[RMDB]
RNA sequence: GGGAACGACUCGAGUAGAGUCGAAAAGAAACCGCGGAUUCCGUUGGUGUCCAAUGUGACCGGGCAGAUGGCCGGCGCAGGCUACGGCGAUGGACAGUACUGGGUGGAGCAUGCGCGGCGCCCCGUGCAUACGAAUACGAUUCGUCGUAUUCGUAUGAAAAGAAACAACAACAACAAC
Reactivity to 2A3 in 0.01 (KOAc 150mM, MgCl2 10mM, bicine 150mM(pH8.5), 24C), signal-to-noise 9, nucleotides 027 to 126: g020a020a040a000c010c000g000c030g040g060a160u120u040c020c010g030u060u140g050g060u030g020u020c010c000a070a100u080g060u030g100a300c010c010g000g040g040c060a110g110a300u250g170g030c010c000g010g000c010g000c010a020g130g000c010u050a030c140g060g000c010g070a100u080g020g020a010c030a040g110u100a070c050u110g140g000g020u100g040g000a020g030c090a060u140g080c020g000c010g020g010c010g030c010c010c000c010g030u070g030
Reactivity to DMS in 0.01 (KOAc 150mM, MgCl2 10mM, bicine 150mM(pH8.5), 24C), signal-to-noise 9, nucleotides 027 to 126: g000a070a110a070c010c000g020c020g000g000a200u000u010c020c010g020u000u010g030g010u000g010u000c020c030a120a130u000g010u000g000a160c020c020g010g000g010c040a190g010a130u010g010g010c000c010g000g010c030g010c020a050g010g010c020u000a050c100g020g000c020g010a140u000g000g000a050c070a070g000u010a090c070u000g010g010g020u010g000g000a080g010c130a070u000g010c030g010c020g000g000c040g000c060c000c000c090g010u010g010